[RMDB]
RNA sequence: GGGAACGACUCGAGUAGAGUCGAAAAUUUAGACUUUGUGUCUACUCUUCUCAACUAAACGAAAUUUUUCUAGUGCUGUCAUUUGUUAUGGCAGUCCUAGUGUAAUUGAAAUUUCGUCAAGUUUGUAUCCAUAUCUGGGCUUCGGCCCAGAUAUGGAAAAAGAAACAACAACAACAAC
Reactivity to 2A3 in 0.01 (KOAc 150mM, MgCl2 10mM, bicine 150mM(pH8.5), 24C), signal-to-noise 1, nucleotides 027 to 126: u050u030u020a020g020a000c050u100u080u300g140u120g000u030c000u000a050c030u030c000u120u000c000u000c010a000a160c050u060a060a060a060c000g000a000a000a000u000u000u000u070u000c000u000a000g030u020g000c000u000g000u010c020a030u000u080u100g300u300u150a000u020g010g040c000a000g000u000c000c000u000a000g000u000g080u060a130a200u050u090g020a020a000a000u000u000u000c000g030u000c000a000a030g010u040u030u040g040u040a100

Structure probing data (2A3) for a 177-nucleotide construct. The 2A3 profile rests on 580 reads. Conditions: 150 mM KOAc, 10 mM MgCl2 and 150 mM bicine (pH 8.5), 24 C.